[RMDB]
RNA sequence: GGGAACGACUCGAGUAGAGUCGAAAACAUAGCGGCUGGCAACACCGGUUAAUUGGAUAACCCCAUUAUUUUGGCCGAAGCAGGAGUUAGGGAAGGUAUUGAACACGGCUGAUAGCAUGGAGUUCAAAAUUCAUCUACUUUUCGAAGUAGAUGAAUUAAAAGAAACAACAACAACAAC
Reactivity to 2A3 in 0.01 (KOAc 150mM, MgCl2 10mM, bicine 150mM(pH8.5), 24C), signal-to-noise 8, nucleotides 027 to 126: c030a010u120a030g060c030g040g020c030u040g050g000c030a070a030c030a040c060c010g040g010u090u080a110a080u090u090g060g020a050u070a130a090c000c060c000c030a020u090u150a090u040u200u040u090g030g000c000c010g030a030a010g000c030a020g010g060a050g030u090u160a050g000g010g030a050a030g060g010u070a090u050u100g010a020a000c030a010c030g000g000c010u080g120a120u090a030g010c040a040u050g030g020a110g030u030u060c020a090a060
Reactivity to DMS in 0.01 (KOAc 150mM, MgCl2 10mM, bicine 150mM(pH8.5), 24C), signal-to-noise 9, nucleotides 027 to 126: c060a080u000a090g010c050g010g010c070u000g010g010c060a070a090c100a130c090c050g010g010u000u000a050a080u000u010g010g000a130u010a080a110c100c040c020c050a090u010u000a100u000u000u010u000g010g010c020c020g010a080a100g010c050a050g000g000a080g010u000u000a070g010g010g010a060a040g010g010u000a110u000u000g010a020a030c030a060c060g000g000c010u000g010a120u010a070g010c030a050u000g010g000a110g010u000u000c040a030a040